[RMDB]
RNA sequence: GGGAACGACUCGAGUAGAGUCGAAAAUGCUUCAAAAAUUAAUCACCUUAUUGAUGAAAACAAACAAGCAUCACCAAUGGCAGAUGAUUAUGUUAAUGUCUUAAAAUUGAAUAUCACUUUAGAUAAAGUCUAGUUACGCAUUCGUGCGUAACUAGACAAAAGAAACAACAACAACAAC
Reactivity to DMS in 0.01 (KOAc 150mM, MgCl2 10mM, bicine 150mM(pH8.5), 24C), signal-to-noise 1, nucleotides 027 to 126: u000g000c050u000u010c070a040a100a090a130a010u000u000a300a100u000c000a050c260c050u000u010a100u030u080g070a000u000g000a090a030a060a190c200a000a130a140c240a090a010g070c040a130u000c060a040c050c000a070a130u040g000g030c050a090g020a030u030g000a030u000u000a000u090g000u000u000a010a040u030g040u000c030u030u010a040a050a160a010u000u000g000a000a300u040a060u030c000a130c300u000u000u000a000g000a080u000a000a070a010
Reactivity to 2A3 in 0.01 (KOAc 150mM, MgCl2 10mM, bicine 150mM(pH8.5), 24C), signal-to-noise 2, nucleotides 027 to 126: u000g000c000u030u100c150a000a080a130a130a190u090u130a020a000u040c020a000c040c030u020u270a150u070u130g130a070u020g000a070a000a000a000c130a030a060a000c000a120a000g000c000a000u000c060a000c000c000a130a000u090g020g060c000a020g000a150u010g040a050u040u110a000u120g230u020u120a040a040u040g000u000c000u050u140a000a090a090a090u270u280g100a100a000u120a030u140c030a000c040u090u090u040a110g000a120u260a030a060a000